Structure probing data (2A3 and DMS) for a 177-nucleotide construct. Conditions: 150 mM KOAc, 10 mM MgCl2 and 150 mM bicine (pH 8.5), 24 C.
RNA sequence: GGGAACGACUCGAGUAGAGUCGAAAAUCAAAGAUCGCAUUUGACAGUUAUGGCAAAAGGACGGCAACGUCAGCGCGUUCCGAGACGCAACGGUCGCCGACGAUAAAAUCGUAUCGAUUGAAAUCAGAGUAGUUUACGUCUUCGGACGUAAACUACUAAAAGAAACAACAACAACAAC
Reactivity to 2A3 in 0.01 (KOAc 150mM, MgCl2 10mM, bicine 150mM(pH8.5), 24C), signal-to-noise 3, nucleotides 027 to 126: u060c020a020a050a030g120a050u080c020g010c080a090u040u020u100g050a040c070a010g010u100u020a100u170g050g000c030a000a000a080a020g100g050a000c030g010g000c020a100a010c010g120u090c040a060g010c030g000c040g020u110u060c060c040g060a100g020a060c030g010c000a030a050c060g010g020u000c010g000c010c000g050a040c000g000a000u170a090a170a040a040u090c080g000u050a040u100c060g030a050u010u160g070a070a020a050u050c070a000g030
Reactivity to DMS in 0.01 (KOAc 150mM, MgCl2 10mM, bicine 150mM(pH8.5), 24C), signal-to-noise 3, nucleotides 027 to 126: u030c020a020a100a100g000a070u030c000g000c090a050u000u000u000g010a010c160a030g020u030u000a060u010g050g000c060a060a040a060a080g000g000a180c000g000g000c150a080a130c080g010u000c000a100g000c210g040c010g000u000u000c070c080g000a080g020a060c020g010c140a110a140c050g000g010u000c010g020c020c020g000a060c000g000a060u030a100a090a000a300u020c080g000u030a070u040c090g010a060u000u000g000a030a050a110u020c110a120g010